[RMDB]
RNA sequence: GGGAACGACUCGAGUAGAGUCGAAAAUACGGGAUUCGUCCCGUAAAAAAGGGGUCGCACUGUCUUGAGGGACAUGAUCUGAAGCCUCCACGGAUCAACAGCCUACCCACCAAGAUAGUGCGACGGAGGCACCCAAAAAACGAGUUUCGACUCGUAAUCUAACCCUGAUCUUCGGAUCAGGGUUAGAAAAAGAAACAACAACAACAAC
Reactivity to 2A3 in 0.01 (KOAc 150mM, MgCl2 10mM, bicine 150mM(pH8.5), 24C), signal-to-noise 1, nucleotides 027 to 156: u030a000c010g010g020g060a030u080u080c220g040u030c120c030c030g010u020a020a000a000a000a050a050g220g000g030g000u020c000g000c000a010c000u000g020u020c000u000u050g060a300g050g010g000a000c010a060u080g000a010u010c000u000g020a040a010g010c010c000u010c000c000a000c030g000g000a000u000c000a040a130c000a030g110c000c010u070a180c060c000c080a100c120c030a020a000g000a000u020a030g020u000g000c000g000a000c000g000g000a000g000g010c000a000c000c000c000a060a050a040a000a000a000c050g030a040g010u060u190u190c080g120a050c010u000c010g000u000a000a130
This 207-nucleotide RNA was probed chemically with 2A3. For 2A3 the reverse transcriptase was SuperScript II with manganese. Reactivities are rounded to 0.1 and cut off at 0 and 3. It was measured as part of the RMDB library RNAMAK.